[RMDB]
An RNA of 177 nucleotides, treated with 2A3 and DMS and read out base by base. Reactivities are given for positions 27 through 126. In probing experiments dimethyl sulfate is read out at A N1 and C N3, which are open when not base-paired. The reactions ran in a buffer of 150 mM KOAc, 10 mM MgCl2 and 150 mM bicine (pH 8.5), at 24 C.

RNA sequence: GGGAACGACUCGAGUAGAGUCGAAAACGAUAGCUGUUCGCAGCUAUCGAAAGGACUACCCGUCAGGGAUAAGGCCAUACGGACAGCCGGGUCCAAUGCCGAAAAGAGGGUUGUUCGCAACCCUCAACAUUUACUACCUCUUCGGAGGUAGUAAAUGAAAAGAAACAACAACAACAAC
Reactivity to 2A3 in 0.01 (KOAc 150mM, MgCl2 10mM, bicine 150mM(pH8.5), 24C), signal-to-noise 6, nucleotides 027 to 126: c010g000a000u000a000g010c010u020g040u080u060c260g010c120a000g000c000u000a000u000c000g000a020a000a000g010g000a010c010u020a040c010c010c020g070u150c150a120g010g030g020a070u130a250a180g030g000c010c010a030u040a060c010g010g020a010c010a010g020c010c010g020g000g000u000c000c000a000a010u060g010c000c000g080a090a040a020a040g010a000g000g010g000u010u010g010u040u070c170g010c070a000a010c000c000c000u000c000a000a000
Reactivity to DMS in 0.01 (KOAc 150mM, MgCl2 10mM, bicine 150mM(pH8.5), 24C), signal-to-noise 7, nucleotides 027 to 126: c030g000a010u000a000g010c000u000g020u000u020c180g020c000a010g010c000u000a000u000c000g000a040a100a120g000g010a030c010u000a240c000c000c000g000u010c210a120g010g010g010a080u010a090a100g000g010c010c020a060u000a090c030g000g000a020c030a150g000c010c010g010g000g000u000c000c000a120a040u020g010c000c020g010a300a050a110a130g000a010g000g010g010u000u010g010u010u010c170g010c010a010a010c000c000c000u000c010a010a070